[RMDB]
RNA sequence: GGGAACGACUCGAGUAGAGUCGAAAAGGAACUAUGUUCAGGCAUGAAGCCUCCACGUGCGUGCGAAAGCACCCGGAAACGGCUGAGCAUAGUUCCGAGCUGAAGGAGGCACGGCUCAAAAUAAAAACCUAUAUGCUGGAUUCGUCCAGCAUAUAGGAAAAGAAACAACAACAACAAC
Reactivity to DMS in 0.01 (KOAc 150mM, MgCl2 10mM, bicine 150mM(pH8.5), 24C), signal-to-noise 3, nucleotides 027 to 126: g010g030a010a010c000u000a020u000g010u000u020c000a000g000g040c000a010u010g010a080a100g020c000c000u000c010c010a300c010g030u000g000c000g010u000g000c000g010a150a090a190g000c010a000c010c000c000g010g010a070a120a110c000g020g030c000u000g010a010g000c000a000u000a000g010u020u000c000c000g000a000g000c000u000g000a060a120g050g000a010g000g010c000a300c000g000g000c000u000c010a180a060a040a080u040a040a100a110a100a080
Reactivity to 2A3 in 0.01 (KOAc 150mM, MgCl2 10mM, bicine 150mM(pH8.5), 24C), signal-to-noise 5, nucleotides 027 to 126: g000g000a000a000c000u000a000u010g010u000u000c000a000g000g010c010a000u020g040a090a030g000c010c000u010c000c000a040c000g000u010g000c000g000u010g000c010g070a140a020a010g000c010a000c000c000c000g020g010a060a050a050c010g000g000c000u000g000a000g000c000a000u000a000g000u000u000c000c000g000a010g000c000u020g040a130a060g000g010a000g000g010c030a010c010g000g000c000u000c010a080a090a010a000u240a040a070a030a010a000